Chemical mapping of a 177-nucleotide RNA with DMS. Values cover nucleotides 27 to 126. The RNA was probed in 150 mM KOAc, 10 mM MgCl2 and 150 mM bicine (pH 8.5) at 24 C.
[RMDB]
RNA sequence: GGGAACGACUCGAGUAGAGUCGAAAACGUGAAACCUUGUGGGAAGCAGGGAGGACCACCUCCCAAGGCUAAAUACUACCUAGUGACCGAUAGUGAAGAAGUACCGUGAGGGAAAGGUGAAAAGAACUACUACUCUGGGGUUCGCCCCAGAGUAGUAAAAAGAAACAACAACAACAAC
Reactivity to DMS in 0.01 (KOAc 150mM, MgCl2 10mM, bicine 150mM(pH8.5), 24C), signal-to-noise 1, nucleotides 027 to 126: c090g070u000g000a090a190a150c040c010u000u000g000u010g010g000g040a160a060g060c010a130g030g000g000a060g010g000a090c210c300a110c040c070u000c000c000c000a000a040g020g000c030u000a040a090a070u030a020c030u000a040c070c020u000a030g030u020g000a060c070c100g010a110u000a000g020u000g000a040a060g010a040a050g000u000a090c030c050g060u010g000a120g010g000g000a040a100a090g010g010u000g000a030a000a070a110g010a130a080c130